[RMDB]
RNA sequence: GGGAACGACUCGAGUAGAGUCGAAAAGAUAUGGAUGGUCGUAUUCCUCGAUGAAAGUUGUCGGAAACGACAACUGGAGAGGGUACGAGCCAUCCUAAGUCAAAAGGUUAAGGUUCGCCUUAACCAACAACAUUCAUGGCUUCGGCCAUGAAUGUUGAAAAGAAACAACAACAACAAC
Reactivity to DMS in 0.01 (KOAc 150mM, MgCl2 10mM, bicine 150mM(pH8.5), 24C), signal-to-noise 2, nucleotides 027 to 126: g030a040u000a300u020g000g000a020u010g010g000u000c010g020u000a020u010u040c000c010u000c010g000a080u000g000a150a210a020g000u000u000g010u000c000g000g000a110a150a300c020g000a020c000a000a000c010u010g000g000a020g000a010g000g030g000u000a000c000g010a090g000c020c000a010u000c000c000u030a060a050g000u010c050a190a080a080a100g020g010u000u010a010a000g000g010u000u000c300g010c000c000u000u000a000a010c010c000a060a130
Reactivity to 2A3 in 0.01 (KOAc 150mM, MgCl2 10mM, bicine 150mM(pH8.5), 24C), signal-to-noise 2, nucleotides 027 to 126: g030a020u090a010u220g010g000a000u000g050g060u000c000g030u030a000u300u300c040c010u050c020g300a300u050g000a000a010a010g030u010u030g020u010c010g000g040a110a030a040c020g000a000c000a000a000c020u000g000g010a000g010a010g010g000g000u000a000c000g000a000g030c000c000a040u000c000c000u010a020a000g020u000c060a080a120a150a040g010g000u020u000a000a010g020g110u060u130c300g300c050c010u010u010a010a000c000c000a000a010